Structure probing data (DMS and 2A3) for a 207-nucleotide construct.
[RMDB]
RNA sequence: GGGAACGACUCGAGUAGAGUCGAAAACGCAUGCGAGAGCAUGCGGCUAAGCUUCGGCUUAGUAAGAGCAACUUGGGAUUUUAGGCUCCCCGGCGUGUCUCGAACCAUGCCGGGCCAAACCCAUAGGGCUGGCGGUCCCUGUGCGGUCCAAAUUCCAGAUUAUAUCGUCAUUCGUGACGAUAUAAUCAAAAGAAACAACAACAACAAC
Reactivity to DMS in 0.01 (KOAc 150mM, MgCl2 10mM, bicine 150mM(pH8.5), 24C), signal-to-noise 1, nucleotides 027 to 156: c010g030c000a000u010g010c000g010a300g000a300g000c000a000u010g020c000g010g000c010u000a010a000g020c020u000u010c300g060g030c000u010u000a010g040u000a060a170g000a140g020c040a100a090c180u020u000g000g010g030a100u000u000u000u000a160g010g000c040u000c090c050c000c020g000g010c000g010u000g020u000c050u000c200g010a170a190c220c000a020u000g050c000c000g010g000g010c040c050a000a070a060c000c000c010a040u000a020g000g020g040c000u000g020g030c090g050g000u000c010c020c010u010g090u000g000c100g050g000u000c050c010a050a080a070u000u010c030c010a300
Reactivity to 2A3 in 0.01 (KOAc 150mM, MgCl2 10mM, bicine 150mM(pH8.5), 24C), signal-to-noise 4, nucleotides 027 to 156: c010g000c000a000u000g000c000g010a030g000a000g060c000a000u000g000c000g000g000c000u000a000a000g000c000u040u150c300g110g000c000u000u000a000g000u020a050a020g000a010g020c020a020a100c100u090u050g000g000g010a030u020u010u040u140a140g030g030c010u030c000c010c000c000g000g000c010g030u010g010u040c080u070c300g080a040a030c030c000a010u020g000c000c000g010g000g000c000c010a040a030a010c010c000c000a000u020a010g020g000g000c040u070g100g080c080g050g040u100c000c000c000u000g000u000g010c120g000g000u020c040c000a000a030a000u030u010c010c010a010
2A3 adducts were read by reverse transcription with SuperScript II with manganese. Conditions: 150 mM KOAc, 10 mM MgCl2 and 150 mM bicine (pH 8.5), 24 C. For DMS the reverse transcriptase was MarathonRT.